[RMDB]
RNA sequence: GGGAACGACUCGAGUAGAGUCGAAAACUCUCAGCCCCUCCACCUUGGAGUGCCUAUUCGGAGCACUGCAGUUCCCGAUAGAAAGGCUAAGCACCUCGCAAUGACGUAAGGUGGGACUUUUCCCUCGCAUGGAUAGGAGGUUCGCCUCCUAUCCAUGAAAAGAAACAACAACAACAAC
Reactivity to DMS in 0.01 (KOAc 150mM, MgCl2 10mM, bicine 150mM(pH8.5), 24C), signal-to-noise 3, nucleotides 027 to 126: c100u010c020u000c040a170g010c020c020c030c010u000c020c020a060c130c090u000u000g010g000a050g000u010g000c030c020u000a130u020u000c230g000g010a100g010c010a040c060u010g000c080a140g000u000u000c010c000c030g010a090u020a090g000a080a070a060g000g020c030u000a070a100g020c090a050c040c010u010c050g000c040a140a160u010g010a150c110g020u000a050a020g020g000u000g010g000g000a080c060u000u000u000u000c000c010c020u010c090g010
Reactivity to 2A3 in 0.01 (KOAc 150mM, MgCl2 10mM, bicine 150mM(pH8.5), 24C), signal-to-noise 1, nucleotides 027 to 126: c010u040c010u000c080a040g060c010c010c000c000u000c000c020a130c020c020u000u000g040g010a050g010u040g050c000c000u050a090u100u100c070g060g020a050g030c000a020c060u130g000c010a010g000u010u020c000c000c000g000a000u000a010g090a080a090a000g050g000c020u030a070a000g010c050a030c040c000u020c010g010c010a130a300u210g060a100c030g050u030a020a020g050g000u000g000g030g000a000c020u070u040u050u000c010c050c040u000c040g050